[RMDB]
RNA sequence: GGGAACGACUCGAGUAGAGUCGAAAAGAUAUGGAAUGUCACUGCGUGUUGCGUCGACGAUAAGAACCCAUCGGAAACGAUGGAGUUCUUUUGACGUCGACCAACACGCAGUGACAUUCCUAAGUCACUACACGAGUUAGUUCGCUAACUCGUGUAGAAAAGAAACAACAACAACAAC
Reactivity to DMS in 0.01 (KOAc 150mM, MgCl2 10mM, bicine 150mM(pH8.5), 24C), signal-to-noise 1, nucleotides 027 to 126: g010a040u020a300u020g000g000a000a000u000g010u000c000a020c000u000g040c000g000u000g000u020u000g080c270g010u010c020g000a010c000g000a110u000a050a000g000a000a000c000c000c010a000u000c000g000g000a140a070a270c000g040a020u000g010g020a100g030u000u000c000u000u010u000u010g010a160c110g070u000c000g000a000c030c000a000a010c000a020c040g000c000a000g000u000g000a000c000a000u000u000c000c000u000a030a060g010u000c040a300

Background
An RNA of 177 nucleotides, treated with DMS and read out base by base. For DMS, 1,436 sequencing reads were counted. Values are in units of 0.01, from 0 to 300, in steps of 10.